[RMDB]
RNA sequence: GGGAACGACUCGAGUAGAGUCGAAAAUCAGGAACACGCUCAAGGAGGAAUUUAUCGGAGAGUGCCGCCAGAAAAACGGGUCAUUAGGAUAUCUGUACGACUACUCCGCAGCCUUAAACCUGACGCUGCGUGCCGCAGAACUGCGCCGCGGUAACCGUGCUCAUUCGCAGUUCGCUGCGAAUGAGCAAAAAGAAACAACAACAACAAC
Reactivity to 2A3 in 0.01 (KOAc 150mM, MgCl2 10mM, bicine 150mM(pH8.5), 24C), signal-to-noise 1, nucleotides 027 to 156: u010c000a020g000g010a090a000c080a010c050g000c010u080c070a140a140g060g030a000g040g020a160a080u120u140u080a180u260c030g020g000a000g000a000g030u020g050c000c020g040c120c090a010g130a080a090a000a000a000c050g020g000g050u030c040a060u120u160a040g060g000a000u120a050u000c020u050g000u040a050c030g030a020c010u050a130c000u020c000c030g010c060a000g020c000c050u060u090a040a010a060c000c010u050g000a020c070g000c010u010g020c000g040u140g070c030c060g020c010a110g050a300a070c060u080g000c000g000c020c020g010c020g000g000u020a020a020c000c020g100